[RMDB]
RNA sequence: GGGAACGACUCGAGUAGAGUCGAAAACACUCCUUCCCCCCUGCGGGCCCCCCCAUAAGAUGGCAGGAACCCACUCAUUGGGGUCCGCUGUUCCAUUCUUUCUUACCUUGUGGCCGGCAUGGUCCCAUCAGGUGCCAGUUCGCUGGCACCAAAAGAAACAACAACAACAAC
Reactivity to 2A3 in 0.01 (KOAc 150mM, MgCl2 10mM, bicine 150mM(pH8.5), 24C), signal-to-noise 2, nucleotides 027 to 129: c050a000c020u000c000c000u010u060c000c000c000c000c000c010u030g000c060g020g000g000c000c000c000c000c000c000c000a020u010a050a040g070a030u000g010g000c020a020g010g000a040a060c000c000c000a070c030u140c030a100u010u210g000g000g000g040u000c000c020g050c050u050g000u040u090c080c000a040u110u070c000u100u070u000c000u070u040a070c020c010u040u030g030u130g070g070c020c000g010g020c030a040u140g010g020u000c010c040c000a070u100c050a020
Reactivity to DMS in 0.01 (KOAc 150mM, MgCl2 10mM, bicine 150mM(pH8.5), 24C), signal-to-noise 1, nucleotides 027 to 129: c140a170c080u000c060c010u030u040c010c030c030c060c000c090u020g030c120g010g000g090c050c000c000c000c000c070c000a030u020a020a180g020a060u010g000g050c100a050g150g010a070a000c020c030c000a000c240u010c190a080u060u070g010g030g000g110u060c070c070g120c070u040g040u010u050c030c050a080u010u070c060u040u020u000c150u000u070a140c090c080u050u000g000u000g010g000c000c040g000g010c030a100u000g000g030u020c060c020c000a110u100c180a060

Chemical mapping of a 170-nucleotide RNA with 2A3 and DMS. It was measured as part of the RMDB library 15KLIB. The reactions ran in a buffer of 150 mM KOAc, 10 mM MgCl2 and 150 mM bicine (pH 8.5), at 24 C. For 2A3, 2,933 sequencing reads were counted.